Structure probing data (2A3 and DMS) for a 177-nucleotide construct.
RNA sequence: GGGAACGACUCGAGUAGAGUCGAAAAAGUGGCUAAGCUAUACGGUAUCGGCAUUAACGAGGUGAUGGCCUUGGGCGAUGGUGGUAACGACACCCAGAUGCUAGAGUACGUGGGCUGGGGCGUAGCGCCUCAUUACCCUGUUCGCAGGGUAAUGAGGAAAAGAAACAACAACAACAAC
Reactivity to 2A3 in 0.01 (KOAc 150mM, MgCl2 10mM, bicine 150mM(pH8.5), 24C), signal-to-noise 6, nucleotides 027 to 126: a000g090u080g030g010c030u050a040a050g020c030u080a060u040a300c030g020g020u060a030u070c030g050g000c040a020u070u040a070a040c050g010a030g000g040u110g090a250u180g150g010c040c020u040u050g060g000g020c070g030a050u110g000g070u010g010g000u020a060a030c050g050a010c020a040c010c010c000a020g010a060u080g010c020u070a060g000a020g120u110a040c030g010u040g010g040g000c020u010g010g050g010g000c040g010u040a030g120c010g020
Reactivity to DMS in 0.01 (KOAc 150mM, MgCl2 10mM, bicine 150mM(pH8.5), 24C), signal-to-noise 7, nucleotides 027 to 126: a090g010u000g010g010c030u010a150a080g020c030u000a080u010a100c080g000g010u000a050u000c040g000g010c030a050u010u000a080a120c090g010a050g000g020u010g010a110u010g010g010c020c030u010u000g020g000g020c160g010a070u000g020g000u000g010g000u000a070a090c220g000a120c070a050c020c000c070a100g010a070u000g000c020u000a110g010a110g010u000a050c080g000u000g000g000g010c050u000g000g000g000g000c050g000u000a060g000c130g000
2A3 adducts were read by reverse transcription with SuperScript II with manganese. It was measured as part of the RMDB library OK2TST.